RNA sequence: GGGAACGACUCGAGUAGAGUCGAAAAAAGUUGCACCAGGUACGGAUACCAGACGUUGCCAAACAGGGAGACAUGAGGAUCACCCAUGUACUGUCCCUUGGCAGCCGUACCUGGUGCUGGUGAAAAACUGAAUUGUCAUCUUCGGAUGACAAUUCAGAAAAGAAACAACAACAACAAC
Reactivity to DMS in 0.01 (KOAc 150mM, MgCl2 10mM, bicine 150mM(pH8.5), 24C), signal-to-noise 3, nucleotides 027 to 126: a020a090g010u010u000g030c010a030c010c000a000g010g020u000a000c010g000g000a140u020a080c130c080a100g000a090c200g030u010u000g010c050c020a020a040a100c180a090g010g010g010a040g030a010c010a000u010g000a080g010g020a260u010c300a100c010c010c000a030u010g000u000a090c060u020g000u010c000c030c020u000u010g010g020c000a050g010c040c010g020u000a000c010c000u010g010g000u000g000c010u010g000g000u000g000a160a020a080a010a130
Reactivity to 2A3 in 0.01 (KOAc 150mM, MgCl2 10mM, bicine 150mM(pH8.5), 24C), signal-to-noise 1, nucleotides 027 to 126: a000a040g300u120u050g000c000a000c000c000a000g030g000u000a000c000g020g040a050u050a180c000c010a030g090a090c080g100u130u040g010c000c000a120a090a000c050a040g010g050g000a010g000a010c000a000u030g030a220g080g000a080u210c060a300c090c000c000a000u010g020u040a190c050u210g150u130c010c000c010u030u000g000g020c000a000g000c000c000g010u000a000c000c000u010g000g000u000g000c000u010g000g010u130g040a060a000a020a000a060
An RNA of 177 nucleotides, treated with DMS and 2A3 and read out base by base. The DMS profile rests on 1,775 reads.